[RMDB]
RNA sequence: GGGAACGACUCGAGUAGAGUCGAAAAGGCGGCGGGCUGAAUCCUUUGCAGACGACUUAAAACGCGACGGGGCAUUGUAAGUGGCAGAGUGGCCUUGCUGCCACGAUCCACUGAGAUCCAGCCCCACAUACCUCUCUUUCUUCGGAAAGAGAGGUAUAAAAGAAACAACAACAACAAC
Reactivity to DMS in 0.01 (KOAc 150mM, MgCl2 10mM, bicine 150mM(pH8.5), 24C), signal-to-noise 8, nucleotides 027 to 126: g000g020c070g010g020c090g000g010g010c020u000g000a090a080u000c040c030u000u010u020g020c050a050g010a090c040g000a080c060u000u010a080a060a080a130c200g000c080g010a130c120g000g010g000g020c020a060u000u010g010u040a120a020g020u000g010g010c180a030g000a300g000u000g000g010c000c040u030u020g020c200u020g010c010c000a000c000g000a190u000c000c000a020c010u000g000a150g000a050u020c090c100a100g000c000c000c000c040a050c150
Reactivity to 2A3 in 0.01 (KOAc 150mM, MgCl2 10mM, bicine 150mM(pH8.5), 24C), signal-to-noise 7, nucleotides 027 to 126: g080g010c030g010g010c030g020g030g000c030u020g040a030a070u090c010c030u030u040u080g040c030a030g020a070c040g010a030c020u090u180a080a050a040a050c050g030c030g070a070c110g000g010g020g020c010a040u040u040g030u070a040a040g000u000g010g040c100a030g010a020g070u020g010g010c010c010u110u240g070c250u210g000c020c000a000c000g000a010u010c000c000a020c020u040g010a040g000a040u050c020c010a020g000c000c000c000c000a010c000